[RMDB]
RNA sequence: GGGAACGACUCGAGUAGAGUCGAAAAGAUAUGGAGAGUGUUGUGGGAGCUGCUGGAUCGGAAACGAUCCAAACAGCGAGGAUCACACGGCACUCUCCUAAGUCAAAGCAUUAGUUCGCUAAUGCAACCAUGAGCAAAUGUUCGCAUUUGCUCAUGGAAAAGAAACAACAACAACAAC
Reactivity to DMS in 0.01 (KOAc 150mM, MgCl2 10mM, bicine 150mM(pH8.5), 24C), signal-to-noise 2, nucleotides 027 to 126: g000a030u010a080u010g000g000a020g010a030g000u000g010u000u000g000u010g000g020g010a180g010c000u000g010c140u000g010g000a010u000c000g030g000a020a010a050c000g010a020u000c010c000a000a030a090c000a010g010c020g000a130g010g000a280u000c080a100c020a020c000g000g000c010a000c000u000c010u000c010c000u000a000a030g000u000c020a090a190a120g000c000a000u010u000a010g000u000u010c300g010c000u010a010a000u000g000c010a150a280
Reactivity to 2A3 in 0.01 (KOAc 150mM, MgCl2 10mM, bicine 150mM(pH8.5), 24C), signal-to-noise 2, nucleotides 027 to 126: g020a010u010a000u080g000g000a020g000a010g000u030g000u040u000g010u070g030g130g280a300g040c010u000g000c000u000g000g010a000u010c000g000g020a000a010a000c000g000a010u000c000c000a000a050a000c010a010g000c020g030a080g080g160a120u300c010a010c010a000c050g000g000c000a000c000u000c000u000c010c000u000a000a010g000u000c020a040a130a050g010c010a000u010u010a000g050u090u090c300g000c230u000a020a000u000g000c010a010a080